About this RNA: The record gives the reactivity of an RNA of 177 nucleotides to DMS. The reactions ran in a buffer of 150 mM KOAc, 10 mM MgCl2 and 150 mM bicine (pH 8.5), at 24 C.

RNA sequence: GGGAACGACUCGAGUAGAGUCGAAAAAUUGAUGCGAAGGGGGGACGGAGAAGGCUAUGUUGGCCCGGCGACGGUUGUCCCGGUUUAAGCGUGUAGGCUGGUUUUCCAGGCAAAUCCGGAAAUUGAACUUAUGGCUGGAAUUCGUUCCAGCCAUAAGAAAAGAAACAACAACAACAAC
Reactivity to DMS in 0.01 (KOAc 150mM, MgCl2 10mM, bicine 150mM(pH8.5), 24C), signal-to-noise 2, nucleotides 027 to 126: a110u000u000g020a050u000g000c010g030a100a060g030g010g000g020g000g020a070c080g000g010a030g000a140a070g010g010c050u000a050u000g010u000u000g010g010c130c010c030g010g020c120g010a040c040g000g030u010u030g000u010c000c010c000g020g000u010u000u010a080a080g020c040g040u010g010u010a090g010g010c030u000g000g000u000u010u010u010c010c020a150g000g030c060a070a080a070u000c030c010g030g010a040a070a070u010u010g000a120a130